This 207-nucleotide RNA was probed chemically with 2A3 and DMS. The 2A3 profile rests on 1,686 reads. Reactivities are given for positions 27 through 156.
RNA sequence: GGGAACGACUCGAGUAGAGUCGAAAAAAGCAUCCAACUAACAUUUCUGUAUCUAUGCAAUUGAAAACAACAUAGCCAUUCAAAGGGAUGAGGCAGAGCUAUAUGAACUGAUAUAUUGGGAUUGAAAUAAACCAGAUCACCAAGCACAUUUUGGAUGAUGAGAAUAUUGCUUCGGCAAUAUUCUCAUAAAAGAAACAACAACAACAAC
Reactivity to 2A3 in 0.01 (KOAc 150mM, MgCl2 10mM, bicine 150mM(pH8.5), 24C), signal-to-noise 4, nucleotides 027 to 156: a000a020g030c010a030u020c040c020a030a030c090u110a050a040c020a130u100u110u060c060u100g080u070a190u140c050u030a060u100g020c030a080a130u130u130g060a140a070a050a030c040a070a000c010a040u050a020g030c030c010a030u030u050c070a210a110a050g080g010g010a030u060g020a040g040g040c010a000g020a020g030c040u020a040u000a010u300g030a040a040c050u030g060a010u080a020u040a050u200u050g010g010g030a030u020u050g040a090a080a070u120a060a060a010c060c000a000g000a050u020c010a020c180c010a010a000g070c040a030c020a080u120u100u050u070g040g010a020u060g030
Reactivity to DMS in 0.01 (KOAc 150mM, MgCl2 10mM, bicine 150mM(pH8.5), 24C), signal-to-noise 1, nucleotides 027 to 156: a050a140g000c000a060u000c020c040a140a110c040u000a060a160c040a060u000u000u010c050u000g060u000a130u000c010u010a020u000g050c020a100a200u000u000g000a100a050a100a100c000a060a060c090a020u000a070g020c100c030a060u000u000c060a080a060a130g050g020g030a080u000g000a160g060g010c020a060g010a180g010c070u000a060u060a050u000g050a020a080c020u010g050a060u000a090u000a070u020u000g040g000g070a220u010u000g030a100a090a080u000a060a080a100c000c020a060g020a070u000c020a060c040c050a070a120g000c040a080c040a100u000u000u010u000g000g020a110u000g000

It was measured as part of the RMDB library OK3TST. The RNA was probed in 150 mM KOAc, 10 mM MgCl2 and 150 mM bicine (pH 8.5) at 24 C.